[RMDB]
RNA sequence: GGGAACGACUCGAGUAGAGUCGAAAACAUCUUUCCUCCCAACACAGUGACUCCAGCUUGGGAGGGGCAGGGCUAGGCUGAGCCAGCACUCCCUGUGGUGUCUGCCUGCCACGUGCAGCUCUGGAGUAAAACCUGGAGAAGUUCGCUUCUCCAGGAAGGUACGACUCUAGUUCGCUAGAGUCGUACCAAAAGAAACAACAACAACAAC
Reactivity to 2A3 in 0.01 (KOAc 150mM, MgCl2 10mM, bicine 150mM(pH8.5), 24C), signal-to-noise 2, nucleotides 027 to 156: c010a050u110c090u020u130u050c000c000u000c010c010c000a050a020c080a020c040a080g110u000g120a010c000u000c010c000a000g010c040u030u080g000g000g000a000g000g010g010g020c000a010g000g000g000c000u300a010g010g000c000u020g030a080g110c000c040a020g030c020a070c080u140c000c040c000u030g010u020g060g030u030g100u000c050u050g010c000c000u020g050c000c040a110c130g210u210g010c020a040g000c030u010c010u050g000g000a000g010u010a000a070a000a000c000c000u000g010g000a000g000a010a010g030u060u170c160g010c130u010u000c000u000c000c020a000g000g000a000a000